[RMDB]
RNA sequence: GGGAACGACUCGAGUAGAGUCGAAAAGAAUAUCCUCCUAGUUAAAAUGAGGGAAGCAGUAGACUUCAUACCUACUGACUGGACCUGUAGCCAUAAUAGUCUAGUUGCAAGGAACGCACAUGGCCUGGAUUGGUGGUUGUUUCGACAACCACCAAUCAAAAGAAACAACAACAACAAC
Reactivity to DMS in 0.01 (KOAc 150mM, MgCl2 10mM, bicine 150mM(pH8.5), 24C), signal-to-noise 1, nucleotides 027 to 126: g000a070a140u000a090u000c030c030u000c010c060u010a050g020u010u000a060a080a100a110u010g000a110g000g000g030a150a010g020c040a070g010u000a060g010a050c080u000u030c200a090u000a150c110c050u000a050c010u000g000a010c000u000g000g000a160c010c040u000g030u010a030g030c070c030a090u000a130a070u010a020g000u010c040u000a050g000u030u000g030c130a090a060g000g000a070a080c180g000c100a030c110a050u000g010g020c020c100u000g010
Reactivity to 2A3 in 0.01 (KOAc 150mM, MgCl2 10mM, bicine 150mM(pH8.5), 24C), signal-to-noise 1, nucleotides 027 to 126: g030a000a110u080a000u160c010c000u010c010c000u110a090g020u270u180a030a210a080a080u180g050a010g020g090g000a000a000g000c000a000g000u050a000g010a170c050u170u080c210a070u160a150c040c000u070a080c050u030g220a300c000u000g030g220a010c000c010u020g010u030a030g000c070c000a030u050a040a080u000a290g040u040c080u010a000g030u190u080g100c000a140a030g210g020a070a040c050g000c010a060c090a080u090g040g000c000c050u070g060
Description
The record gives the reactivity of an RNA of 177 nucleotides to DMS and 2A3. The RNA was probed in 150 mM KOAc, 10 mM MgCl2 and 150 mM bicine (pH 8.5) at 24 C. For 2A3, 458 sequencing reads were counted. 2A3 adducts were read by reverse transcription with SuperScript II with manganese. For DMS the reverse transcriptase was MarathonRT. It was measured as part of the RMDB library OK2TST. Values cover nucleotides 27 to 126. Values are in units of 0.01, from 0 to 300, in steps of 10.